[RMDB]
Annotation:
Chemical mapping of a 207-nucleotide RNA with 2A3 and DMS. For DMS the reverse transcriptase was MarathonRT. For DMS, 3,583 sequencing reads were counted. The 2A3 profile rests on 2,022 reads.
RNA sequence: GGGAACGACUCGAGUAGAGUCGAAAAUACCAGCGCCCACUUGUAGAGUGAAUUUAAGGGCUUAGCUUAAUGUGUCUUGAUCAUCAGGCUACAUUAAAGUGAAUUAAAUUGAUGAAUCUAAGUAUGUAGAUACUAAGGGAAAGUGAUGACGGACGUGCACAGCAGUAAGGUUCGCCUUACUGCUGUGAAAAGAAACAACAACAACAAC
Reactivity to 2A3 in 0.01 (KOAc 150mM, MgCl2 10mM, bicine 150mM(pH8.5), 24C), signal-to-noise 4, nucleotides 027 to 156: u110a010c010c000a020g040c010g010c080c040c030a070c040u120u130g090u150a120g030a060g100u130g070a110a120u150u190u150a100a070g010g000g000c000u060u300a000g000c010u010u010a020a000u020g010u000g010u000c010u060u070g040a080u060c010a000u010c000a010g010g000c010u010a000c010a010u030u010a060a060a060g030u030g000a010a020u080u090a040a030a040u070u080g000a040u020g030a040a090u030c050u060a040a060g000u020a060u100g070u050a000g050a120u040a060c030u040a080a100g050g020g030a030a120a060g040u050g060a090u070g010a020c050g040g000a000c040g010u050g000
Reactivity to DMS in 0.01 (KOAc 150mM, MgCl2 10mM, bicine 150mM(pH8.5), 24C), signal-to-noise 2, nucleotides 027 to 156: u000a120c000c030a170g020c080g020c020c010c010a100c050u010u000g070u000a080g020a200g020u010g020a070a100u000u000u000a040a130g010g020g020c040u000u020a100g020c040u000u000a040a010u010g030u010g040u000c100u000u000g040a170u010c070a080u000c000a040g010g010c010u000a020c300a050u000u000a030a050a040g010u000g000a110a190u000u000a020a050a080u000u010g000a130u010g000a050a110u000c050u010a090a100g040u020a050u000g000u000a090g010a120u010a040c050u000a070a060g010g000g000a070a040a040g000u000g020a070u010g000a080c060g010g020a070c060g000u020g000